This 177-nucleotide RNA was probed chemically with 2A3.
The reactions ran in a buffer of 150 mM KOAc, 10 mM MgCl2 and 150 mM bicine (pH 8.5), at 24 C.
[RMDB]
RNA sequence: GGGAACGACUCGAGUAGAGUCGAAAACGUCUACAGUUCGCUGUAGACGAAAGGCGCGGCACCGUCCGCGGAACAAACGGGCCCAUACUAAAAUUAAAAUAAAAAGAUGAUGGUUCGCCAUCAUCAAGGAAGGUUUUAAGUUCGCUUAAAACCUUCCAAAAGAAACAACAACAACAAC
Reactivity to 2A3 in 0.01 (KOAc 150mM, MgCl2 10mM, bicine 150mM(pH8.5), 24C), signal-to-noise 1, nucleotides 027 to 126: c000g000u020c000u030a000c010a050g040u050u050c050g100c110u030g020u060a080g020a000c010g000a020a000a000g030g020c000g040c020g010g020c000a040c110c000g130u110c000c000g010c000g050g130a000a000c010a000a050a000c010g040g000g000c000c030c020a090u140a020c080u120a090a090a210a300u300u120a110a090a090a260u300a090a060a010a060a020g020a000u010g020a010u000g000g080u040u040c210g090c050c000a000u000c000a000u010c000a000a000
High 2A3 reactivity points to a flexible backbone, as in loops and unpaired stretches.